[RMDB]
RNA sequence: GGGAACGACUCGAGUAGAGUCGAAAAGGGCUUGAUCCAUCGCCCGAAUAAGAUGGAUGAUACAAGUCGACAUCGUACGCGACGUAGAACGUACUCAUUGAAGUGCGAAAGCACGAAGUCCGACGAGUCUGGGACGAUCAUCAGGCAAGACUUAGAACGGAGCUAUACGUUUCGACGUAUAGCUCCGAAAAGAAACAACAACAACAAC
Reactivity to 2A3 in 0.01 (KOAc 150mM, MgCl2 10mM, bicine 150mM(pH8.5), 24C), signal-to-noise 2, nucleotides 027 to 156: g060g000g000c050u110u180g080a000u000c000c000a000u010c000g000c010c010c020g000a010a070u190a080a000g000a000u000g010g040a000u000g010a000u050a130c070a000a000g000u000c000g020a040c040a200u040c000g050u030a140c020g020c110g000a000c020g000u000a100g040a090a000c020g030u000a030c000u020c040a210u100u300g060a170a000g000u020g010c000g040a140a020a010g130c090a020c100g000a080a000g020u000c060c000g010a010c000g000a020g000u000c000u070g030g020g000a110c080g020a130u060c020a010u040c010a000g040g000c030a040a060g030a010c020u070u110a080g010a150a000
Structure probing data (2A3) for a 207-nucleotide construct. It was measured as part of the RMDB library OK3TST. Conditions: 150 mM KOAc, 10 mM MgCl2 and 150 mM bicine (pH 8.5), 24 C.